This 177-nucleotide RNA was probed chemically with DMS. The DMS profile rests on 797 reads. Reactivities are given for positions 27 through 126.
[RMDB]
RNA sequence: GGGAACGACUCGAGUAGAGUCGAAAAGAAUCGCAUGGUCUCGCACCGCUUGAUGCCGGCCACCACCAGGGAACGCUUCCCGUCCUUGCCUUGCAGGUCGAUCGCCAGGCCGAGAUUGGUGUGCGCCCCGCUCUCUACUCUUCGGAGUAGAGAGCGGAAAAGAAACAACAACAACAAC
Reactivity to DMS in 0.01 (KOAc 150mM, MgCl2 10mM, bicine 150mM(pH8.5), 24C), signal-to-noise 1, nucleotides 027 to 126: g010a130a170u010c080g020c030a100u000g000g030u000c040u000c040g000c300a060c080c050g010c030u010u000g000a140u000g000c000c000g070g010c000c000a110c050c050a140c240c010a040g020g000g000a050a060c160g010c200u000u000c050c030c010g010u000c050c010u000u010g000c110c050u030u020g040c140a090g020g020u010c040g020a010u000c080g010c060c030a100g020g000c220c020g020a030g000a120u000u010g060g010u040g040u000g010c100g030c100c040

The RNA was probed in 150 mM KOAc, 10 mM MgCl2 and 150 mM bicine (pH 8.5) at 24 C.